[RMDB]
RNA sequence: GGGAACGACUCGAGUAGAGUCGAAAAGUAAGAUGAUUCGUCAUCUUACGAACCCGAUGAAGCGGCACAUACCGAGCUUCAUACUUCUAAGAGUGCAAAUAAUGGCGCGUGGUUUCGACCACGCGAAGAUAUCUCCCUUCUUCGGAAGGGAGAUAUCAAAAGAAACAACAACAACAAC
Reactivity to DMS in 0.01 (KOAc 150mM, MgCl2 10mM, bicine 150mM(pH8.5), 24C), signal-to-noise 2, nucleotides 027 to 126: g010u010a010a000g000a020u000g010a010u010u020c190g010u000c000a000u000c000u010u010a000c000g010a060a140c010c000c000g020a040u000g010a030a000g020c000g000g010c030a050c100a060u010a180c070c130g000a110g020c000u000u000c010a000u010a060c140u000u000c170u000a080a090g010a110g010u000g000c040a100a060a120u020a060a060u020g000g010c020g030c000g020u000g010g000u000u000u010c200g030a030c000c000a000c000g010c000g020a000a050
Reactivity to 2A3 in 0.01 (KOAc 150mM, MgCl2 10mM, bicine 150mM(pH8.5), 24C), signal-to-noise 2, nucleotides 027 to 126: g000u000a000a000g000a040u010g000a000u050u130c150g050u000c100a010u000c000u020u000a000c010g000a020a020c000c000c010g000a020u050g000a010a010g040c030g060g040c030a060c010a170u210a100c030c130g020a070g020c010u040u020c010a020u040a120c040u140u110c060u120a170a130g090a070g140u060g040c040a030a070a120u160a080a120u240g240g030c020g000c010g010u000g000g000u010u060u120c240g050a030c000c000a000c000g000c000g000a000a000